[RMDB]
The data come from the RNA Mapping Database (RMDB), library OK1LIB. An RNA of 177 nucleotides, treated with 2A3 and read out base by base. For 2A3 the reverse transcriptase was SuperScript II with manganese.
RNA sequence: GGGAACGACUCGAGUAGAGUCGAAAAGCGCCUCUGGGAGCACGAGCUGGUGCGCUGUUUCAAAAUUCUGUGUCACCGCAACAACCAGGGCCAAGAGACGUCGAUCUCGUACUCCAGCGGGGCGAUCUAGCUCCGCACCCUUCGGGGUGCGGAGCUAAAAAGAAACAACAACAACAAC
Reactivity to 2A3 in 0.01 (KOAc 150mM, MgCl2 10mM, bicine 150mM(pH8.5), 24C), signal-to-noise 1, nucleotides 027 to 126: g010c030g010c000c010u030c000u020g050g000g010a000g000c060a000c000g020a000g050c090u100g040g060u160g000c000g010c040u040g000u080u000u080c090a090a040a000a020u160u000c030u090g210u040g000u090c040a020c030c160g080c020a000a160c110a080a100c060c000a020g000g000g030c010c020a130a000g000a000g010a040c000g100u120c050g180a050u040c020u020c000g000u000a020c000u000c010c000a070g090c040g030g010g010g000c000g000a020u020c060